[RMDB]
RNA sequence: GGGAACGACUCGAGUAGAGUCGAAAAGAAAGAAAGAGCUAUUUUCCAAGUAGAGAAAAGUUUCUAAUUACCCAUCAUGCACAAAUGUGGUGACUAGAGCCUAUUCUCUUCUUGGAAAAGUGGCGAAUUCAACUCCCCUGUUCGCAGGGGAGUUGAAAAAAGAAACAACAACAACAAC
Reactivity to DMS in 0.01 (KOAc 150mM, MgCl2 10mM, bicine 150mM(pH8.5), 24C), signal-to-noise 1, nucleotides 027 to 126: g000a120a070a130g020a060a040a070g020a300g010c000u000a050u000u000u000u000c000c000a020a010g010u000a000g000a020g000a000a020a100a000g000u000u000u000c000u020a000a000u030u020a000c010c000c030a030u020c140a140u040g110c220a080c300a060a050a020u000g000u020g000g040u000g000a000c100u000a010g000a000g000c100c020u000a140u000u010c000u000c000u000u030c000u000u000g000g000a020a000a000a000g010u030g020g000c000g000a100a070
Reactivity to 2A3 in 0.01 (KOAc 150mM, MgCl2 10mM, bicine 150mM(pH8.5), 24C), signal-to-noise 3, nucleotides 027 to 126: g050a030a110a000g110a010a120a010g110a010g010c030u020a030u020u000u010u010c010c000a000a000g000u000a000g000a000g000a010a000a000a010g010u040u080u050c000u000a000a050u000u030a020c000c050c010a030u090c030a010u250g300c110a130c060a150a180a030u080g120u170g030g000u000g010a000c010u000a000g000a000g020c020c000u080a170u070u000c000u000c010u010u000c000u000u010g010g000a000a000a000a000g000u000g010g000c030g000a010a000